[RMDB]
RNA sequence: GGGAACGACUCGAGUAGAGUCGAAAAUAGCACAAGGAUGCCAGGAUUCAUCUCAGUCUGAUCAAUACUUGUCUAUAGGAAGGAUAGAGGAUCAUGGAACUGAUAUACCCGUGAUAGAGACAAUAGCUCAUUCACAACAGUUCGCUGUUGUGAAUGAAAAAGAAACAACAACAACAAC
Reactivity to 2A3 in 0.01 (KOAc 150mM, MgCl2 10mM, bicine 150mM(pH8.5), 24C), signal-to-noise 3, nucleotides 027 to 126: u050a010g030c020a010c030a110a030g080g020a060u050g050c020c000a000g060g000a020u080u080c020a090u040c110u010c050a030g020u020c000u000g010a040u050c020a070a040u060a240c000u040u070g050u040c020u030a090u080a070g120g070a090a020g000g000a000u020a090g050a030g040g000a030u020c000a010u090g040g020a060a020c030u020g060a020u030a030u060a160c010c030c030g000u050g030a100u050a090g120a010g020a030c010a020a090u070a070g000c000
Reactivity to DMS in 0.01 (KOAc 150mM, MgCl2 10mM, bicine 150mM(pH8.5), 24C), signal-to-noise 4, nucleotides 027 to 126: u000a060g010c090a050c090a080a080g020g010a120u000g000c060c060a100g020g000a070u000u000c070a050u000c080u000c080a110g010u010c010u000g010a060u000c060a060a060u010a110c050u000u010g010u020c060u030a090u000a070g010g010a090a140g000g010a050u000a040g000a110g000g010a020u000c050a050u000g000g010a050a120c060u000g000a110u000a080u000a080c070c020c050g020u000g000a060u010a060g010a080g010a060c060a070a050u010a090g000c110
The record gives the reactivity of an RNA of 177 nucleotides to 2A3 and DMS.
For DMS the reverse transcriptase was MarathonRT.
For DMS, 3,607 sequencing reads were counted.